[RMDB]
RNA sequence: GGGAACGACUCGAGUAGAGUCGAAAAGAUGAGAACUUUUUAGUAAACUCAAAGGCGAUAUCGUUAAUGCGUAUGAGAUACGUUAUAGUAUAUUCCGCGCGUGACCCACCCUCUGCUUCUUUCAUAGGCAAUACUUUAUUGAUAGCCGCCGCAAUAAGACAUGUGUACCUUUCGAGGUACACAUGUCAAAAGAAACAACAACAACAAC
Reactivity to 2A3 in 0.01 (KOAc 150mM, MgCl2 10mM, bicine 150mM(pH8.5), 24C), signal-to-noise 2, nucleotides 027 to 156: g060a050u090g000a000g020a050a040c010u120u060u000u100u170a090g060u090a190a100a090c030u030c000a110a040a050g020g000c020g000a010u030a020u100c060g070u060u140a180a030u140g000c040g050u030a100u220g080a090g000a030u000a000c010g030u090u260a090u120a170g030u010a020u000a020u070u050c020c020g000c000g000c040g050u050g050a080c000c000c000a070c090c000c000u030c020u030g040c020u060u070c000u070u260u000c060a070u110a060g020g020c010a030a050u020a150c020u110u180u190a140u150u260g020a020u020a030g100c100c000g000c010c000g000c030a010a150u180a200a030
Reactivity to DMS in 0.01 (KOAc 150mM, MgCl2 10mM, bicine 150mM(pH8.5), 24C), signal-to-noise 1, nucleotides 027 to 156: g010a080u000g000a040g020a210a060c050u010u000u000u010u010a180g060u010a120a060a070c040u010c020a070a100a140g000g000c050g030a160u000a050u000c010g040u000u000a030a070u000g000c000g060u010a040u000g020a100g000a180u000a010c040g010u000u020a200u010a220g030u000a030u000a130u000u020c000c050g010c040g000c010g000u000g000a300c010c030c000a070c000c020c020u000c050u000g000c010u000u000c020u000u000u000c030a090u000a090g020g030c020a060a140u000a090c060u010u000u000a090u030u000g020a070u000a150g030c030c030g000c050c020g000c100a050a040u000a020a220
An RNA of 207 nucleotides, treated with 2A3 and DMS and read out base by base. For DMS the reverse transcriptase was MarathonRT. The RNA was probed in 150 mM KOAc, 10 mM MgCl2 and 150 mM bicine (pH 8.5) at 24 C. The 2A3 profile rests on 724 reads.